Structure probing data (DMS and 2A3) for a 177-nucleotide construct. The reactions ran in a buffer of 150 mM KOAc, 10 mM MgCl2 and 150 mM bicine (pH 8.5), at 24 C. DMS adducts were read by reverse transcription with MarathonRT.

[RMDB]
RNA sequence: GGGAACGACUCGAGUAGAGUCGAAAAGAUAUGGACUUAAGGGAGAACCCAAGUCUAUCUCGGAAACGAGCCGAGGAUGGGUUCGAAGAACUUAAGUCCUAAGUCAAAAUCACAGUUCGCUGUGAAACGAAAUAAAUAACUUCGGUUAUUUAUUUCGAAAAGAAACAACAACAACAAC
Reactivity to DMS in 0.01 (KOAc 150mM, MgCl2 10mM, bicine 150mM(pH8.5), 24C), signal-to-noise 5, nucleotides 027 to 126: g000a040u010a300u010g000g010a020c000u000u000a010a010g000g010g010a070g010a030a020c000c000c000a030a300g000u010c060u000a070u010c010u000c000g000g000a140a040a240c080g010a040g020c300c180g010a020g010g010a240u000g000g000g000u000u000c000g010a090a120g000a100a130c000u010u000a020a010g000u000c000c000u000a010a060g000u010c040a080a060a120a120u000c010a010c010a010g010u000u010c190g010c010u000g020u000g000a020a090a170
Reactivity to 2A3 in 0.01 (KOAc 150mM, MgCl2 10mM, bicine 150mM(pH8.5), 24C), signal-to-noise 3, nucleotides 027 to 126: g040a010u070a050u140g000g000a000c000u020u000a000a010g040g010g000a030g000a020a000c000c010c040a070a010g060u000c050u020a190u070c000u000c010g030g030a140a210a130c100g030a060g120c050c020g040a020g060g000a050u140g010g000g000u010u010c010g010a050a030g000a020a000c010u000u000a000a000g000u000c010c010u000a000a000g010u000c000a030a030a040a210u070c010a000c000a010g030u100u130c190g030c120u010g000u010g030a060a010a010